[RMDB]
RNA sequence: GGGAACGACUCGAGUAGAGUCGAAAAACUCUCAGCAAGAUCAACAACUCCAUCCUUGGCUUUGGAAGUGAUUUGAAAGGCCAGCUUGUUCAACCCGUAACACCAGCUCUACGCACUCGCUUUGAAGCAAAGCAGGAGUGUUCGCACUCCUGCUUUGAAAAGAAACAACAACAACAAC
Reactivity to DMS in 0.01 (KOAc 150mM, MgCl2 10mM, bicine 150mM(pH8.5), 24C), signal-to-noise 3, nucleotides 027 to 126: a070c120u000c000u010c070a080g000c090a100a080g040a070u000c060a040a080c110a090a070c050u010c030c020a040u000c040c020u030u020g040g010c070u010u010u010g000g000a100a080g000u030g010a080u000u020u010g000a050a070a060g000g010c030c010a050g000c060u000u020g000u020u010c050a060a050c040c030c000g010u000a100a040c090a090c040c060a040g000c030u000c050u000a050c100g000c030a050c060u010c030g020c030u000u020u000g020a080a120g000
Reactivity to 2A3 in 0.01 (KOAc 150mM, MgCl2 10mM, bicine 150mM(pH8.5), 24C), signal-to-noise 5, nucleotides 027 to 126: a000c020u020c000u000c010a030g010c030a060a020g010a110u100c020a010a080c040a030a040c040u020c030c010a080u010c030c020u060u080g050g000c040u090u090u080g050g060a110a110g040u150g100a090u080u080u250g130a120a040a000g030g000c000c010a010g040c070u050u120g040u110u060c020a050a070c030c000c000g050u070a070a010c010a040c050c010a010g020c020u000c020u070a030c030g010c000a060c010u030c020g010c050u090u130u140g100a050a010g000